Structure probing data (2A3) for a 177-nucleotide construct. The RNA was probed in 150 mM KOAc, 10 mM MgCl2 and 150 mM bicine (pH 8.5) at 24 C.
[RMDB]
RNA sequence: GGGAACGACUCGAGUAGAGUCGAAAAUAUUCAGCAAUCAGAGUAGGUACGGUAGUCACUGCUUAUGAGGACUGCUCGGGGCUGGUAUCAUUUACCGGGUUCAUAAAACAGAUAAAUCUCACUGCAAGAGCCAAAGGUGAUUCGUCACCUUUGGCUCAAAAGAAACAACAACAACAAC
Reactivity to 2A3 in 0.01 (KOAc 150mM, MgCl2 10mM, bicine 150mM(pH8.5), 24C), signal-to-noise 1, nucleotides 027 to 126: u300a140u120u050c030a040g000c260a100a110u030c000a000g070a000g110u000a000g080g000u010a090c000g110g100u040a030g000u030c100a010c000u000g000c000u020u000a040u110g100a000g000g120a000c040u030g050c000u010c030g080g000g000g000c000u000g020g030u110a030u160c060a130u090u030u050a040c000c000g020g000g000u060u000c050a070u200a120a040a000a010c030a000g110a130u150a150a170a130u070c000u000c030a030c000u040g140c030a000a140
The 2A3 profile rests on 357 reads. It was measured as part of the RMDB library OK1LIB.